[RMDB]
RNA sequence: GGGAACGACUCGAGUAGAGUCGAAAAAGAUAAUUGCAGAGGAAAGGGUAGCUGAGAGAAUUGAUACCAUGACAUUGGCAAUCACUCAAGAGCUUACCUGCUUUGAACUCAGUAAUAUGGAGUUUGCCACUCCGAUGAGUUUCGACUCAUCGGAGUGAAAAGAAACAACAACAACAAC
Reactivity to DMS in 0.01 (KOAc 150mM, MgCl2 10mM, bicine 150mM(pH8.5), 24C), signal-to-noise 2, nucleotides 027 to 126: a110g000a050u050a030a090u010u000g010c040a100g010a030g010g000a070a070a040g000g000g000u000a030g000c000u000g010a300g000a010g000a170a020u010u010g000a060u000a190c020c000a000u000g010a180c210a100u030u000g000g010c050a010a020u000c030a050c000u010c010a000a200g000a040g000c000u020u030a000c000c010u000g010c090u010u030u010g000a080a090c030u000c000a060g010u010a020a030u000a040u010g020g000a130g010u000u000u030g000c080
Reactivity to 2A3 in 0.01 (KOAc 150mM, MgCl2 10mM, bicine 150mM(pH8.5), 24C), signal-to-noise 3, nucleotides 027 to 126: a000g070a050u130a050a040u060u070g050c040a030g000a040g050g060a090a030a070g010g000g000u040a000g000c010u010g030a070g000a000g010a070a070u140u080g000a050u070a060c000c000a020u110g100a110c180a220u130u000g030g000c020a030a000u000c000a040c060u020c020a020a060g110a010g240c000u000u090a040c000c010u020g000c000u080u110u080g020a020a000c000u000c000a000g030u090a010a070u070a130u300g030g000a030g050u050u070u130g070c020